[RMDB]
RNA sequence: GGGAACGACUCGAGUAGAGUCGAAAAAUAGGUGCAUGCAACUGGUGAGAGAAAAUGGGAGCAUUUUGAAACCAAUCUAGUUAGUACUAUCUUGCAAUUUACCUAGCCUGGGGACAUCCUGCCCCCGGCCUGCCAUUCAAUUCGUUGAAUGGCAGGCAAAAGAAACAACAACAACAAC
Reactivity to 2A3 in 0.01 (KOAc 150mM, MgCl2 10mM, bicine 150mM(pH8.5), 24C), signal-to-noise 1, nucleotides 027 to 126: a000u130a010g050g000u010g040c030a040u030g010c010a040a040c100u060g000g040u070g060a090g010a020g020a090a050a050a040u110g040g050g000a120g020c020a030u050u040u010u190g020a050a010a000c030c000a010a020u000c030u040a010g070u090u020a010g000u110a030c020u020a020u110c050u040u030g020c020a120a140u020u050u080a050c000c000u000a020g030c010c020u060g000g010g000g000a010c010a030u090c000c040u020g000c000c010c000c000c020g010
Reactivity to DMS in 0.01 (KOAc 150mM, MgCl2 10mM, bicine 150mM(pH8.5), 24C), signal-to-noise 2, nucleotides 027 to 126: a060u010a040g000g010u010g000c210a070u000g000c000a030a050c240u000g010g000u000g000a200g000a210g010a030a010a060a040u010g010g000g030a110g020c020a060u000u020u010u000g010a090a130a100c050c010a050a160u000c130u000a060g020u020u000a150g000u010a090c070u000a040u010c100u000u000g000c060a020a080u000u010u010a050c030c010u000a020g000c050c030u020g010g010g000g010a100c060a070u010c100c120u010g020c050c010c000c010c040g000
This 177-nucleotide RNA was probed chemically with 2A3 and DMS. For DMS the reverse transcriptase was MarathonRT. For 2A3, 1,402 sequencing reads were counted.